[RMDB]
Background:
The record gives the reactivity of an RNA of 207 nucleotides to 2A3 and DMS. Reactivities are given for positions 27 through 156.
RNA sequence: GGGAACGACUCGAGUAGAGUCGAAAACGUAAACCAAUACCUCUUGAAUCGAUACCUAGUGAUGCUAUUAAAUUGUCAACAGUGCGUCCGGUCUGUAAUUACAAAGGAGGCAAAGUAUUAUCGCCAAAAGCAGGUCUAAAAAAAUGGGUCGUAACACAGGACAAUCGAAAUUCGUUUCGAUUGUCCUAAAAGAAACAACAACAACAAC
Reactivity to 2A3 in 0.01 (KOAc 150mM, MgCl2 10mM, bicine 150mM(pH8.5), 24C), signal-to-noise 3, nucleotides 027 to 156: c030g040u070a100a000a000c040c050a060a060u090a210c000c030u050c040u080u140g040a070a050u030c040g030a040u080a230c000c000u070a050g000u040g120a070u100g000c020u040a040u140u130a080a060a220u170u150g040u050c040a040a090c030a060g060u020g070c010g030u010c040c050g010g030u000c030u030g100u030a060a170u110u080a090c070a160a060a000g050g020a020g000g050c020a050a020a000g010u010a040u170u090a040u150c060g000c010c050a050a070a010a010g020c070a040g000g050u060c040u130a120a130a030a000a010a000a030u090g000g020g000u000c010g000u010a070a010c110a030c060
Reactivity to DMS in 0.01 (KOAc 150mM, MgCl2 10mM, bicine 150mM(pH8.5), 24C), signal-to-noise 1, nucleotides 027 to 156: c070g000u010a050a000a110c020c030a040a200u010a100c030c010u000c010u000u010g020a120a110u000c050g000a120u000a030c080c020u020a150g100u000g000a090u010g010c010u000a230u000u020a050a070a100u030u020g000u010c060a020a030c050a000g010u000g040c010g020u000c020c010g040g040u000c010u020g000u000a090a100u010u010a080c060a060a120a110g040g000a030g000g010c020a100a110a060g000u020a020u000u000a110u010c100g000c020c020a070a120a040a110g020c040a030g000g000u000c030u000a000a000a000a100a070a070a180u000g020g000g030u000c060g020u010a030a080c020a060c230